[RMDB]
RNA sequence: GGGAACGACUCGAGUAGAGUCGAAAAGGGAGAUGCGGGAUCUGUUGGCAUAUAUGGAGAACGUCGUCUCCGACGCCCUGGGGCGAUACAGCCAGCGAACCGGAGAGGACGACUGAUGAGCAACCUCUAGUGCUCCAGUAUUCGUACUGGAGCACUAAAAAGAAACAACAACAACAAC
Reactivity to DMS in 0.01 (KOAc 150mM, MgCl2 10mM, bicine 150mM(pH8.5), 24C), signal-to-noise 2, nucleotides 027 to 126: g030g000g000a090g010a070u020g030c070g010g000g010a170u000c040u020g020u010u000g010g030c060a130u000a120u000a090u040g030g000a110g030a190a130c020g000u000c020g030u010c000u000c010c000g010a050c050g020c050c070c080u000g010g010g040g000c080g030a100u010a040c090a040g000c000c080a100g000c020g040a080a090c090c020g000g000a030g020a040g030g000a040c080g020a060c060u010g010a080u000g000a110g020c040a100a110c080c060u000c050